Structure probing data (DMS and 2A3) for a 207-nucleotide construct.

[RMDB]
RNA sequence: GGGAACGACUCGAGUAGAGUCGAAAAUUAUCAGUAGUUGCUUUAUCACUUGCCAUUGUCGGUUGCAUGGAUAAACCAAAAACAUAUAUUUGCGGAAAUGAAGCGUUUGAGGUUACAAGCGAAUAUAUGAAAGUUGUGCAAGGUAAAAGCACAGGCGAACGCAAACUCUAUUCGUAGAGUUUGCGUUAAAAGAAACAACAACAACAAC
Reactivity to DMS in 0.01 (KOAc 150mM, MgCl2 10mM, bicine 150mM(pH8.5), 24C), signal-to-noise 1, nucleotides 027 to 156: u000u020a060u000c060a130g000u000a130g060u000u000g010c000u000u000u000a120u020c080a060c010u010u010g040c000c040a110u000u000g030u000c060g010g030u000u000g020c070a090u000g040g000a150u000a090a080a060c000c030a030a050a040a170a130c020a010u000a000u000a020u000u000u000g000c000g010g000a130a130a080u000g020a070a160g010c040g030u000u000u000g010a110g020g020u000u010a040c060a110a300g010c000g000a010a020u000a020u000a010u050g010a080a050a190g010u000u000g030u020g020c000a040a090g060g030u000a030a010a080a130g000c000a030c030a080g020g020c010g030
Reactivity to 2A3 in 0.01 (KOAc 150mM, MgCl2 10mM, bicine 150mM(pH8.5), 24C), signal-to-noise 2, nucleotides 027 to 156: u110u010a030u220c010a010g050u130a010g020u050u070g000c010u070u060u020a090u080c060a060c230u000u000g000c030c000a060u020u120g090u060c040g040g010u060u150g000c130a190u250g030g060a170u190a080a000a040c010c020a020a010a020a020a000c000a000u000a010u000a000u000u000u010g010c010g010g060a010a130a150u130g020a040a080g020c010g040u160u200u200g100a050g110g000u060u090a010c050a090a060g010c000g010a000a000u000a000u000a000u000g030a140a140a060g080u110u070g060u110g060c000a010a010g070g000u030a000a030a030a000g020c000a000c010a000g090g020c080g060

It was measured as part of the RMDB library OK3TST. For DMS, 1,813 sequencing reads were counted. High DMS reactivity at an A or C suggests that its Watson-Crick edge is free. For 2A3 the reverse transcriptase was SuperScript II with manganese.